[RMDB]
RNA sequence: GGGAACGACUCGAGUAGAGUCGAAAAGUGCGCUGCUAUUCAGGGGUCAUUCGUAUCGUGUGAUGCAGAUUUUGUUGCGUACGUGAUCUCUCACCCCUGGGAGAUCUUUCAUACUGCACGAAAGAAAGGGAUAACUAAAGUUCGCUUUAGUUAUCCCAAAAGAAACAACAACAACAAC
Reactivity to 2A3 in 0.01 (KOAc 150mM, MgCl2 10mM, bicine 150mM(pH8.5), 24C), signal-to-noise 3, nucleotides 027 to 126: g020u030g000c020g000c010u070g010c020u020a030u080u090c000a010g000g010g030g040u040c050a050u070u090c100g070u140a100u090c020g000u050g010u020g030a030u060g000c030a030g040a120u080u050u060u190g130u060u040g020c010g000u010a030c010g010u020g000a000u000c010u000c000u020c010a050c000c010c000c010u000g000g000g000a000g000a000u000c000u020u010u000c020a030u020a040c000u030g030c050a010c070g040a050a040a050g110a060a100a020
Reactivity to DMS in 0.01 (KOAc 150mM, MgCl2 10mM, bicine 150mM(pH8.5), 24C), signal-to-noise 3, nucleotides 027 to 126: g000u000g010c020g030c000u000g000c020u010a140u000u020c060a040g010g010g020g000u010c050a170u020u010c090g020u020a060u000c010g020u000g010u000g000a100u020g000c040a040g010a130u000u000u030u010g000u020u010g000c020g010u000a050c080g010u020g010a020u000c010u000c000u000c070a070c050c040c030c100u010g000g000g000a020g000a010u000c010u000u010u000c020a080u030a080c050u010g000c030a030c060g000a080a090a090g000a100a070a130